[RMDB]
RNA sequence: GGGAACGACUCGAGUAGAGUCGAAAAUAGUGAAGACAGUGGAUGAAGAUGCAGGUAGGCAGAUACAUUUGGUGAUAGGAAGAGGGGAGAGUAUUUGUCUGAUGAGCAAAGCCAAAGGAAUAUUGCCUUUACACACUAUCUUUUCUGAUAUAGGGAACAUGGUGAGCUGCUUCGGCAGCUCACCAUGAAAAGAAACAACAACAACAAC
Reactivity to 2A3 in 0.01 (KOAc 150mM, MgCl2 10mM, bicine 150mM(pH8.5), 24C), signal-to-noise 1, nucleotides 027 to 156: u100a010g100u070g050a000a020g020a020c010a110g000u020g000g060a080u060g030a150a000g020a020u050g030c020a020g090g000u050a030g020g000c000a000g030a010u120a020c020a050u050u050u110g040g030u070g080a140u030a110g030g040a030a050g000a070g110g050g020g000a000g020a000g030u040a100u050u020u000g080u040c070u020g010a020u000g040a020g080c070a050a030a000g060c000c000a060a020a000g110g000a100a090u150a140u210u040g070c000c000u070u140u160a070c120a000c000a000c060u070a000u070c010u160u020u060u000c050u110g070a080u070a020u060a190g090g000g050a020a020
Conditions: 150 mM KOAc, 10 mM MgCl2 and 150 mM bicine (pH 8.5), 24 C. Structure probing data (2A3) for a 207-nucleotide construct. For 2A3 the reverse transcriptase was SuperScript II with manganese. Values cover nucleotides 27 to 156.